[RMDB]
RNA sequence: GGGAACGACUCGAGUAGAGUCGAAAACAAAGAUGCCACAAUGGGUGAUCCGCAGCCAAGUCCCCUGGAGAAGCGACUUCAUGAUUCUUGCCCAUGACAUGUCGGAGCGGACAGUAUUUUGAACCCAGAGCGCCAUUUUUUUGAUGUCAGACAAAAAGCAUCUAUGUAGGUUCGCCUACAUAGAUGCAAAAGAAACAACAACAACAAC
Reactivity to 2A3 in 0.01 (KOAc 150mM, MgCl2 10mM, bicine 150mM(pH8.5), 24C), signal-to-noise 1, nucleotides 027 to 156: c010a010a070a030g030a020u090g000c000c030a060c080a050a100u030g020g020g020u070g020a090u010c000c020g000c030a010g050c000c030a060a000g120u110c010c000c050c000u040g030g030a020g010a110a000g140c020g030a020c000u030u010c070a060u060g040a110u160u000c060u110u120g030c000c000c000a010u060g000a010c060a100u130g000u040c020g080g020a070g010c000g020g010a000c010a010g050u070a160u030u300u100u080g050a010a010c000c000c000a010g040a000g040c000g010c020c020a030u060u050u000u000u000u070u190g070a050u040g060u110c020a010g000a120c040a010a040a020a000a040